An RNA of 177 nucleotides, treated with DMS and 2A3 and read out base by base. Values cover nucleotides 27 to 126. 2A3 adducts were read by reverse transcription with SuperScript II with manganese. Conditions: 150 mM KOAc, 10 mM MgCl2 and 150 mM bicine (pH 8.5), 24 C. For DMS the reverse transcriptase was MarathonRT. It was measured as part of the RMDB libraries RFM100 and RFMREP.
RNA sequence: GGGAACGACUCGAGUAGAGUCGAAAAGGCUGAGAACUCCCCUCUUUUAUGCCCGGCGGUAGCGCAGCGAUCCGCGCCUCCGCCCUCCCGUUUGGGGACCUCGGUACAGGCAGGCUGAGAAUUCCCCACUAGUAGAGGUAUUCGUACCUCUACUAGUAAAAGAAACAACAACAACAAC
Reactivity to DMS in 0.01 (KOAc 150mM, MgCl2 10mM, bicine 150mM(pH8.5), 24C), signal-to-noise 9, nucleotides 027 to 126: g000g010c020u010g000a050g000a080a130c100u000c010c010c010c050u000c040u000u010u010u010a070u030g000c010c010c110g010g010c010g010g000u000a090g010c020g010c030a120g010c160g010a100u020c080c080g010c020g000c000c020u000c010c010g010c010c010c070u000c000c000c010g020u010u020u010g010g010g000g010a050c300c010u000c010g010g020u000a100c080a070g010g020c060a050g000g010c010u010g000a040g000a090a260u020u000c010c000c000c080
Reactivity to 2A3 in 0.01 (KOAc 150mM, MgCl2 10mM, bicine 150mM(pH8.5), 24C), signal-to-noise 9, nucleotides 027 to 126: g020g000c030u030g020a010g020a130a080c040u090c010c020c040c000u020c010u040u100u010u040a110u190g020c010c010c010g010g000c000g010g030u060a010g010c020g000c040a050g030c050g120a100u080c050c050g000c000g000c000c010u010c000c000g000c000c010c000u020c000c000c000g040u070u100u100g000g000g000g000a000c000c010u010c010g030g010u100a160c020a050g040g110c040a030g040g000c030u010g010a010g010a040a040u130u050c000c000c000c010